[RMDB]
RNA sequence: GGGAACGACUCGAGUAGAGUCGAAAAGAUAUGGAGCUUAGGGAGUUUCGAUGGGCCGAGUCGGAAACGAUAUCCCAUUAGAAACGACGAUCUAAGCUCCUAAGUCAAACCGACGUUCGCGUCGGAACGGUGAGGAUAGGUUCGCCUAUCCUCACCGAAAAGAAACAACAACAACAAC
Reactivity to 2A3 in 0.01 (KOAc 150mM, MgCl2 10mM, bicine 150mM(pH8.5), 24C), signal-to-noise 1, nucleotides 027 to 126: g000a010u100a080u180g010g000a010g020c010u010u000a010g000g000g010a020g000u000u000u030c010g000a000u000g000g020g020c120c120g020a120g060u040c000g060g030a080a100a010c010g000a000u020a040u100c030c010c000a010u050u040a240g040a000a000a000c010g080a050c000g000a000u000c000u000a000a010g000c000u010c000c010u010a010a000g000u000c020a030a050a130c010c000g020a010c000g000u040u130c300g010c000g110u010c000g010g040a030a060
Reactivity to DMS in 0.01 (KOAc 150mM, MgCl2 10mM, bicine 150mM(pH8.5), 24C), signal-to-noise 1, nucleotides 027 to 126: g040a050u010a300u010g010g010a010g000c000u000u000a010g020g000g010a010g010u000u000u000c000g000a000u010g000g000g070c300c130g010a090g010u000c000g000g000a080a050a160c020g010a010u010a110u000c000c000c000a010u010u010a110g000a010a020a010c030g000a080c220g000a010u020c010u000a020a010g010c000u000c000c000u000a000a080g000u000c020a040a110a110c010c000g010a040c000g010u000u000c210g020c000g010u000c000g010g000a070a080
Chemical mapping of a 177-nucleotide RNA with 2A3 and DMS. Values cover nucleotides 27 to 126. DMS (dimethyl sulfate) methylates the pairing face of unpaired adenines and cytosines. The RNA was probed in 150 mM KOAc, 10 mM MgCl2 and 150 mM bicine (pH 8.5) at 24 C. For 2A3 the reverse transcriptase was SuperScript II with manganese.